[RMDB]
RNA sequence: GGGAACGACUCGAGUAGAGUCGAAAAGGGCUGCUGGGCUUGCGGGACGCCGGCCGCCCUCUCGGCCGAGUUGCCGAGUGGCGGCCCGUGCGAGCUGCGCGUCAAUGGCCGGCUGAUCGGCACGUUCGCUCUUUCAUACGUUCGCGUAUGAAAGAGCAAAAGAAACAACAACAACAAC
Reactivity to 2A3 in 0.01 (KOAc 150mM, MgCl2 10mM, bicine 150mM(pH8.5), 24C), signal-to-noise 2, nucleotides 027 to 126: g020g020g000c020u040g000c020u060g020g060g020c030u060u080g010c040g020g050g030a020c020g000c020c010g030g000c000c000g000c010c050c000u010c000u010c000g000g000c030c020g130a080g120u250u210g000c000c000g000a000g000u020g000g000c000g020g000c000c130c020g030u140g000c000g020a080g030c050u110g030c010g000c020g040u060c030a040a110u120g020g000c040c000g000g040c030u070g060a110u080c010g000g000c040a010c070g010u070u050c040
Reactivity to DMS in 0.01 (KOAc 150mM, MgCl2 10mM, bicine 150mM(pH8.5), 24C), signal-to-noise 2, nucleotides 027 to 126: g000g000g000c000u000g010c050u010g000g000g010c010u010u030g020c000g000g020g050a190c050g000c020c070g000g050c000c040g030c070c000c070u000c000u000c000g020g100c010c020g010a130g000u040u020g050c010c030g030a060g010u000g020g020c000g020g050c120c140c090g000u000g020c010g020a120g000c020u000g010c040g000c090g000u010c070a130a070u020g000g000c000c060g000g010c050u000g020a080u030c040g020g000c040a070c060g030u020u030c110